[RMDB]
RNA sequence: GGGAACGACUCGAGUAGAGUCGAAAAAUACAGUACCAAAGUACAAAGAAGCAAUCAAACCGAGCAGUGAAAUGAUGGCUUCAGUCCAAAAUGGGCAAACACUGCAGACGGAGCCAAAGGCAAAUAAUGUUGUUUUUUAGUUCGCUAAAAAACAACAAAAAGAAACAACAACAACAAC
Reactivity to 2A3 in 0.01 (KOAc 150mM, MgCl2 10mM, bicine 150mM(pH8.5), 24C), signal-to-noise 1, nucleotides 027 to 126: a000u130a030c080a030g030u010a050c010c010a130a010a000g060u040a050c020a010a150a030g010a050a010g020c010a000a080u080c000a020a010a140c050c010g020a050g060c040a010g060u030g130a020a100a170u070g030a030u060g060g000c000u040u070c010a000g010u000c010c010a000a220a070a290u150g010g000g020c010a010a030a030c020a010c020u040g000c030a020g040a020c010g020g000a000g000c000c020a060a070a020g040g000c010a010a040a070u200a110a080
Reactivity to DMS in 0.01 (KOAc 150mM, MgCl2 10mM, bicine 150mM(pH8.5), 24C), signal-to-noise 2, nucleotides 027 to 126: a030u020a060c110a080g030u000a090c030c070a090a090a150g010u020a050c080a080a110a080g000a040a030g000c020a050a080u000c050a030a080a100c030c040g030a090g040c000a040g010u000g000a130a070a100u010g010a030u000g030g030c030u000u000c030a050g000u000c020c030a020a030a040a070u000g010g010g040c070a070a120a110c020a000c010u000g000c030a040g000a150c040g030g030a080g020c030c050a070a030a080g000g020c110a090a030a060u010a050a100